[RMDB]
RNA sequence: GGGAACGACUCGAGUAGAGUCGAAAAUGUAAGUUGUAUUUUUUUCUAUACACUUUUUUGCAUAUCUCAAUCUGUUUAUACACACCAUCUACCACCCCGCAUGUGCGUAUGGCGCAUACACAAAGAACUAUGUGUCUAUGUUCGCAUAGACACAUAGAAAAGAAACAACAACAACAAC
Reactivity to 2A3 in 0.01 (KOAc 150mM, MgCl2 10mM, bicine 150mM(pH8.5), 24C), signal-to-noise 8, nucleotides 027 to 126: u120g010u070a030a050g040u100u040g020u050a140u030u090u020u020u000u080u040c090u070a040u020a020c020a010c000u030u030u030u030u130u160g030c020a020u020a090u060c020u000c020a090a110u050c070u060g130u070u110u080a130u080a020c060a000c000a020c020c020a040u010c010u050a060c000c030a020c020c010c000c010g030c050a040u130g030u030g030c020g010u090a130u160g120g010c010g010c000a010u060a060c060a000c020a100a180a020g070a080a010
Reactivity to DMS in 0.01 (KOAc 150mM, MgCl2 10mM, bicine 150mM(pH8.5), 24C), signal-to-noise 3, nucleotides 027 to 126: u010g000u020a030a030g030u020u000g010u000a000u010u000u020u010u020u040u020c060u020a060u000a060c070a050c060u010u000u010u020u020u010g010c080a050u020a080u020c040u010c020a020a090u040c070u000g030u000u010u010a080u010a210c080a110c060a040c020c050a020u000c060u000a060c030c000a140c030c000c010c020g030c110a050u000g040u010g000c010g000u010a040u030g000g000c020g000c030a070u010a090c120a040c140a030a050a090g000a050a090